[RMDB]
RNA sequence: GGGAACGACUCGAGUAGAGUCGAAAAGGACCUUGUCGUCUACAGCGUCGCCGCGCCGCGCAGGACGCAUCCGAAAACGGGCGUCACGCAUCAGUCGACGUUGAAGCCGAUCGGCCACGCGGUGCGACCGAGGAUAGUACUUCGGUACUAUCCUCGGAAAAGAAACAACAACAACAAC
Reactivity to 2A3 in 0.01 (KOAc 150mM, MgCl2 10mM, bicine 150mM(pH8.5), 24C), signal-to-noise 3, nucleotides 027 to 126: g050g020a050c020c030u040u120g080u100c050g010u000c020u060a060c020a050g020c020g020u040c010g010c060c000g000c010g000c010c010g030c020g000c070a080g000g100a010c010g000c050a100u090c020c020g050a110a100a080a160c040g000g040g010c000g000u000c020a010c030g080c000a140u070c030a040g040u080c020g000a000c010g000u010u050g100a040a010g040c010c010g030a150u050c020g010g000c020c020a020c030g020c010g020g030u020g030c020g010a050
Reactivity to DMS in 0.01 (KOAc 150mM, MgCl2 10mM, bicine 150mM(pH8.5), 24C), signal-to-noise 3, nucleotides 027 to 126: g020g020a080c030c030u010u000g010u000c090g010u000c010u000a140c090a070g000c060g020u000c110g000c050c040g000c090g020c060c070g010c050g030c130a140g030g000a020c030g020c080a060u010c020c000g000a050a060a110a130c100g010g010g030c000g000u000c000a130c050g010c070a110u010c110a090g030u000c060g000a030c000g010u000u020g000a080a080g020c080c030g020a050u000c180g020g010c030c040a130c060g000c040g010g030u010g000c030g010a090
Background
Chemical mapping of a 177-nucleotide RNA with 2A3 and DMS. 2A3 adducts were read by reverse transcription with SuperScript II with manganese. For DMS, 2,712 sequencing reads were counted. The reactions ran in a buffer of 150 mM KOAc, 10 mM MgCl2 and 150 mM bicine (pH 8.5), at 24 C. The 2A3 profile rests on 4,395 reads. For DMS the reverse transcriptase was MarathonRT.